Structure probing data (2A3 and DMS) for a 177-nucleotide construct. DMS adducts were read by reverse transcription with MarathonRT.
RNA sequence: GGGAACGACUCGAGUAGAGUCGAAAACAGAGCCCGCCAGCCGCUAAGCCAGGGCCACACCUGGGGGUGAUUUUAUGCCUCACCUCCAGUAGGCACCUUGGUCUCUUUGGGCUAAUCUCUGGCUCCUAUAUUGACUGUGAUUCGUCACAGUCAAUAUAAAAGAAACAACAACAACAAC
Reactivity to 2A3 in 0.01 (KOAc 150mM, MgCl2 10mM, bicine 150mM(pH8.5), 24C), signal-to-noise 9, nucleotides 027 to 126: c020a010g020a000g030c030c050c040g080c070c020a010g010c010c010g040c160u040a020a000g010c000c000a000g000g010g010c010c010a090c010a010c010c000u000g000g000g000g000g020u000g010a020u030u090u080u240a170u280g130c020c010u000c000a000c000c000u000c000c000a000g000u000a010g000g000c020a250c080c010u070u130g010g040u030c020u030c000u080u070u060g030g000g000c000u010a050a080u030c020u000c010u020g040g000c020u010c010c010u010
Reactivity to DMS in 0.01 (KOAc 150mM, MgCl2 10mM, bicine 150mM(pH8.5), 24C), signal-to-noise 6, nucleotides 027 to 126: c030a040g010a030g010c200c070c120g010c230c140a040g000c020c010g020c060u020a060a060g010c020c010a020g010g010g010c020c020a100c080a110c300c010u000g000g000g010g000g010u000g000a020u000u020u030u060a100u040g010c250c230u000c000a000c000c010u000c010c000a010g000u000a040g010g010c040a090c010c000u000u020g010g000u060c040u010c060u000u030u000g000g000g010c010u000a150a090u020c020u000c010u000g010g010c050u000c010c030u000